[RMDB]
RNA sequence: GGGAACGACUCGAGUAGAGUCGAAAAUCUAUCGAUUCGUCGAUAGAAAAAAGCGUACUACAGUGACCACUACCCACCUCUCACUCCCCACCUCCCAAAUAGGAGAGGUGAGAGAGGUGGGAGCUGUAUCGCAAAAACCGCGAGUUCGCUCGCGGAAGCACACUUUACGAUUCGUCGUAAAGUGUGCAAAAGAAACAACAACAACAAC
Reactivity to 2A3 in 0.01 (KOAc 150mM, MgCl2 10mM, bicine 150mM(pH8.5), 24C), signal-to-noise 2, nucleotides 027 to 156: u000c000u000a000u000c000g000a000u020u120c300g050u000c020g090a010u000a000g020a100a030a000a000a000a000g030c040g020u080a070c050u020a010c030a030g020u050g150a090c040c090a090c210u170a160c010c010c020a000c020c000u040c000u000c000a070c070u170c030c040c000c010a010c000c000u020c010c010c010a150a220a030u130a130g000g020a150g010a000g080g010u000g000a030g000a000g000a000g020g000u000g000g000g010a000g000c000u000g000u000a010u300c060g000c040a000a040a060a000a020c000c000g020c010g000a010g010u110u220c240g040c150u000c000g010c000g020g000a020a000
The data come from the RNA Mapping Database (RMDB), library RNAMAK.
This 207-nucleotide RNA was probed chemically with 2A3.
For 2A3 the reverse transcriptase was SuperScript II with manganese.
Reactivities are given for positions 27 through 156.
Values are in units of 0.01, from 0 to 300, in steps of 10.
The 2A3 profile rests on 1,461 reads.
The reactions ran in a buffer of 150 mM KOAc, 10 mM MgCl2 and 150 mM bicine (pH 8.5), at 24 C.
2A3 is a SHAPE reagent: it acylates the 2'-hydroxyl of flexible nucleotides of all four kinds.